Structure probing data (DMS and 2A3) for a 177-nucleotide construct. Source: RMDB library TTRDES, as collected in RNAgym.
[RMDB]
RNA sequence: GGGAACGACUCGAGUAGAGUCGAAAAGAUAUGGAUCGAAGUCUACAACAGCCUGCCAGUCGGAAACGACUGCAGGACAUGUAGUCACGAUCCUAAGUCAAAAGUUGGCCCGUUCGCGGGCCAACAACUCAUUCUAUACGUUCGCGUAUAGAAUGAGAAAAGAAACAACAACAACAAC
Reactivity to DMS in 0.01 (KOAc 150mM, MgCl2 10mM, bicine 150mM(pH8.5), 24C), signal-to-noise 4, nucleotides 027 to 126: g000a030u000a130u010g000g000a010u000c000g010a180a140g020u000c000u000a000c000a150a070c240a190g010c010c000u000g010c210c210a010g000u000c000g030g000a040a010a060c000g010a020c000u000g000c000a010g000g000a010c060a080u010g000u000a000g000u010c040a240c000g000a000u010c000c000u000a020a070g000u000c010a130a100a170a130g000u000u000g010g020c000c010c010g030u000u010c270g020c020g020g000g010c000c000a000a000c000a050a150
Reactivity to 2A3 in 0.01 (KOAc 150mM, MgCl2 10mM, bicine 150mM(pH8.5), 24C), signal-to-noise 2, nucleotides 027 to 126: g000a010u020a010u050g000g010a000u010c020g030a300a090g080u010c000u010a000c010a300a010c040a200g040c000c000u040g090c130c110a000g000u010c000g000g010a020a010a010c000g000a000c000u010g000c000a000g020g000a000c010a120u190g000u000a000g010u010c010a000c010g000a010u000c000c000u010a010a010g000u000c020a000a000a100a180g010u010u000g020g010c040c060c050g020u050u040c300g030c020g080g000g000c000c000a000a000c000a000a000
The DMS profile rests on 4,842 reads.